[RMDB]
Structure probing data (DMS and 2A3) for a 177-nucleotide construct. The RNA was probed in 150 mM KOAc, 10 mM MgCl2 and 150 mM bicine (pH 8.5) at 24 C.

RNA sequence: GGGAACGACUCGAGUAGAGUCGAAAACGGAGACUGUUCGCAGUCUCCGAAAGGAGCCCGCUUUUGCGCUAAGGCCAUACGGACAGCCGGCUCCAAAGCCGAAAAUCCGGCGGUUCGCCGCCGGAAACGUAUAUUCGCAGUUCGCUGCGAAUAUACGAAAAGAAACAACAACAACAAC
Reactivity to DMS in 0.01 (KOAc 150mM, MgCl2 10mM, bicine 150mM(pH8.5), 24C), signal-to-noise 2, nucleotides 027 to 126: c020g000g000a020g000a010c010u000g000u010u010c160g040c010a010g010u000c010u000c000c020g020a000a020a070g010g000a040g000c000c020c020g000c020u010u010u000u010g020c010g020c260u010a100a070g020g000c000c000a030u000a040c030g000g000a010c020a190g000c050c020g000g040c000u010c010c030a040a060a090g000c000c000g000a300a110a100a120u000c010c000g010g000c020g000g010u000u020c160g010c020c010g010c010c000g000g000a000a000a020
Reactivity to 2A3 in 0.01 (KOAc 150mM, MgCl2 10mM, bicine 150mM(pH8.5), 24C), signal-to-noise 2, nucleotides 027 to 126: c010g010g020a000g010a000c000u030g030u120u150c230g000c120a000g000u000c000u000c000c000g000a010a000a000g010g000a010g010c020c090c000g020c040u190u230u150u300g020c000g000c050u100a020a120g030g010c000c000a020u040a060c000g000g010a000c010a000g000c000c000g020g010c010u000c010c000a000a010a010g000c000c000g030a070a010a000a040u010c000c000g010g020c030g010g030u030u040c200g020c140c000g000c000c000g010g010a010a000a000
For DMS, 1,334 sequencing reads were counted.